[RMDB]
RNA sequence: GGGAACGACUCGAGUAGAGUCGAAAAAAGCACACACCAACCAGCCCCUUCAGUGUUCUGGAAUACAUGCUGGUGGCCAAAGUGCGGUGCGAGAAAUAAAAGACGAUGAGCGUUCGCGCUCAUCGUCGAUAAGACACUCGUUCGCGAGUGUCUUAUCAAAAGAAACAACAACAACAAC
Reactivity to 2A3 in 0.01 (KOAc 150mM, MgCl2 10mM, bicine 150mM(pH8.5), 24C), signal-to-noise 3, nucleotides 027 to 126: a000a000g000c000a000c000a000c010a000c000c030a080a050c020c000a000g020c000c000c010c010u060u030c030a070g020u030g080u260u060c010u090g070g080a060a030u130a130c030a020u110g000c000u010g000g050u060g040g000c010c020a130a080a010g050u030g060c150g050g030u030g000c030g010a080g140a040a160a020u300a050a110a020a030g010a010c000g000a000u000g000a010g010c020g010u070u140c230g040c020g020c070u010c010a000u000c000g010u000c000
Reactivity to DMS in 0.01 (KOAc 150mM, MgCl2 10mM, bicine 150mM(pH8.5), 24C), signal-to-noise 4, nucleotides 027 to 126: a060a110g010c010a010c010a110c060a030c010c050a090a130c070c120a200g010c020c090c120c040u000u010c020a050g030u010g010u000u000c120u000g020g010a090a090u000a030c120a050u010g020c030u000g000g020u010g020g000c050c040a050a150a110g010u000g010c070g030g030u000g000c010g000a130g000a120a080a080u000a040a070a100a160g000a020c010g020a010u000g000a020g030c000g000u000u000c160g010c010g020c000u000c010a010u000c010g010u000c000